Structure probing data (DMS and 2A3) for a 177-nucleotide construct. The DMS profile rests on 5,914 reads. For DMS the reverse transcriptase was MarathonRT. Source: RMDB library OK2TRN, as collected in RNAgym. The RNA was probed in 150 mM KOAc, 10 mM MgCl2 and 150 mM bicine (pH 8.5) at 24 C.

[RMDB]
RNA sequence: GGGAACGACUCGAGUAGAGUCGAAAAACAAAAAUUAGCCAGGCAUGGUGAUGCACCUGUAAUUCCAGCUAUUCAGGAAGCUGAGGAAGGAGAAUCGCUUGAACCUGGGAGGCGGAGGUUGCAGUGAUCUCUCUAAAUCAUUCGUGAUUUAGAGAGAAAAAGAAACAACAACAACAAC
Reactivity to DMS in 0.01 (KOAc 150mM, MgCl2 10mM, bicine 150mM(pH8.5), 24C), signal-to-noise 5, nucleotides 027 to 126: a090c070a050a060a050a070a090u010u010a110g020c030c020a050g010g020c100a070u000g000g020u000g010a050u000g020c060a110c040c000u000g010u010a070a080u000u010c140c010a040g000c030u000a100u000u010c130a080g000g010a070a060g010c020u000g020a050g000g000a080a040g010g010a080g010a090a040u000c040g010c030u000u000g000a060a110c040c030u000g010g000g010a060g000g000c060g010g000a060g010g020u000u000g000c050a060g010u010g000a110
Reactivity to 2A3 in 0.01 (KOAc 150mM, MgCl2 10mM, bicine 150mM(pH8.5), 24C), signal-to-noise 4, nucleotides 027 to 126: a000c050a010a070a050a000a030u200u140a070g070c020c010a010g020g000c040a020u070g030g030u050g060a030u050g040c040a040c020c020u040g060u140a040a070u120u070c020c010a020g010c030u040a080u130u140c010a020g140g050a110a020g010c040u080g010a050g050g030a060a000g080g030a060g050a090a030u040c020g010c050u030u040g030a060a050c010c000u020g020g020g000a020g030g020c060g000g030a020g010g040u060u090g010c000a020g020u030g120a070